Annotation
Structure probing data (DMS and 2A3) for a 177-nucleotide construct. The RNA was probed in 150 mM KOAc, 10 mM MgCl2 and 150 mM bicine (pH 8.5) at 24 C. Reactivities are given for positions 27 through 126. For DMS, 8,628 sequencing reads were counted.

[RMDB]
RNA sequence: GGGAACGACUCGAGUAGAGUCGAAAAAAGUUUUUGGAAUGGGUUGCCAACUAUCGUCUUGAUGAUCCUUCUACCCAUCAAGGUAUCUCAUUAGAGAGUACGACGAUGGAAGAUGUGUACACCAAGAGUAUAGCUUUUAGUUCGCUAAAAGCUAUACAAAAGAAACAACAACAACAAC
Reactivity to DMS in 0.01 (KOAc 150mM, MgCl2 10mM, bicine 150mM(pH8.5), 24C), signal-to-noise 7, nucleotides 027 to 126: a090a090g010u000u000u000u000u000g010g010a100a080u010g010g020g010u000u000g010c020c020a090a090c140u000a070u000c090g010u000c020u000u000g010a040u000g000a300u010c020c010u000u000c020u000a110c160c010c010a020u010c030a120a280g000g000u000a040u010c000u000c000a160u010u010a130g010a100g000a030g010u010a030c020g000a110c300g000a010u000g000g010a130a040g010a030u000g000u010g010u000a140c040a040c020c010a040a050g000a120
Reactivity to 2A3 in 0.01 (KOAc 150mM, MgCl2 10mM, bicine 150mM(pH8.5), 24C), signal-to-noise 4, nucleotides 027 to 126: a000a000g140u140u080u020u050u090g090g020a130a030u070g050g060g040u090u110g060c030c020a040a020c050u060a050u210c070g070u000c030u040u020g010a040u030g020a060u060c010c000u010u020c010u020a110c000c020c000a000u010c020a030a030g150g010u060a030u020c010u000c010a060u110u300a100g030a010g010a030g110u080a010c030g040a020c080g010a010u010g000g000a010a020g010a030u030g140u020g030u070a020c020a020c040c010a020a010g010a010